[RMDB]
Conditions: 150 mM KOAc, 10 mM MgCl2 and 150 mM bicine (pH 8.5), 24 C.
Structure probing data (DMS and 2A3) for a 177-nucleotide construct.
It was measured as part of the RMDB library OK1LIB.

RNA sequence: GGGAACGACUCGAGUAGAGUCGAAAAGAUGAGACACAGGUUGCAGCGUAAGUGCAGGGGGAGUUCUCCCUUCACACUUACAAACCGUGUGAAGGUGGAGAAGACACUUGAAAACUUAGAUCUCAGAGAUAGGAGUGUAGUUCGCUGCAUUUCUAUCAAAAGAAACAACAACAACAAC
Reactivity to DMS in 0.01 (KOAc 150mM, MgCl2 10mM, bicine 150mM(pH8.5), 24C), signal-to-noise 9, nucleotides 027 to 126: g000a120u020g000a050g010a030c080a090c110a060g010g000u000u010g000c100a060g010c080g010u010a040a040g010u000g010c050a070g000g000g000g000g010a140g000u010u010c010u000c020c000c000u000u010c020a030c000a010c000u010u030a120c250a080a080a110c280c170g000u000g010u000g000a010a010g000g020u020g010g000a030g000a040a050g000a150c050a030c020u000u020g000a070a000a060a050c060u010u000a110g010a010u000c020u000c030a070g010a210
Reactivity to 2A3 in 0.01 (KOAc 150mM, MgCl2 10mM, bicine 150mM(pH8.5), 24C), signal-to-noise 8, nucleotides 027 to 126: g070a060u070g010a000g010a010c010a000c020a030g010g020u020u040g010c020a050g000c020g050u060a030a020g010u020g020c010a010g010g000g000g000g000a050g030u050u010c000u000c000c000c000u000u000c000a000c000a000c000u050u100a050c020a020a040a010c040c020g000u000g000u000g010a000a010g040g040u080g020g040a020g000a020a010g040a000c010a010c010u040u050g030a000a000a000a000c010u020u020a020g000a010u000c010u000c020a010g010a000
The 2A3 profile rests on 50,696 reads. Reactivities are rounded to 0.1 and cut off at 0 and 3. For DMS the reverse transcriptase was MarathonRT. High DMS reactivity at an A or C suggests that its Watson-Crick edge is free.